The record gives the reactivity of an RNA of 177 nucleotides to DMS.
The reactions ran in a buffer of 150 mM KOAc, 10 mM MgCl2 and 150 mM bicine (pH 8.5), at 24 C.
[RMDB]
RNA sequence: GGGAACGACUCGAGUAGAGUCGAAAAGAUAUGGAUGAAUGGGAGCUGGCAUCGGAAACGAUGUCAGCAGCGAAGAACAUUAUCCUAAGUCAAAAGGAGAACCAUCGGUUCGCCGAUGGUUCUCCAACGAUCACAUGCUGUUCGCAGCAUGUGAUCGAAAAGAAACAACAACAACAAC
Reactivity to DMS in 0.01 (KOAc 150mM, MgCl2 10mM, bicine 150mM(pH8.5), 24C), signal-to-noise 1, nucleotides 027 to 126: g000a010u010a300u010g030g000a030u000g030a030a010u010g000g000g000a200g020c010u000g000g000c030a000u000c010g000g000a150a090a130c010g010a000u010g000u000c000a000g030c000a010g000c290g000a090a150g030a150a220c000a000u010u000a010u000c000c000u000a090a150g020u020c050a090a080a110a120g010g010a030g000a020a010c000c000a010u000c000g020g030u010u000c300g020c000c000g000a000u000g000g010u000u000c000u010c000c000a000a000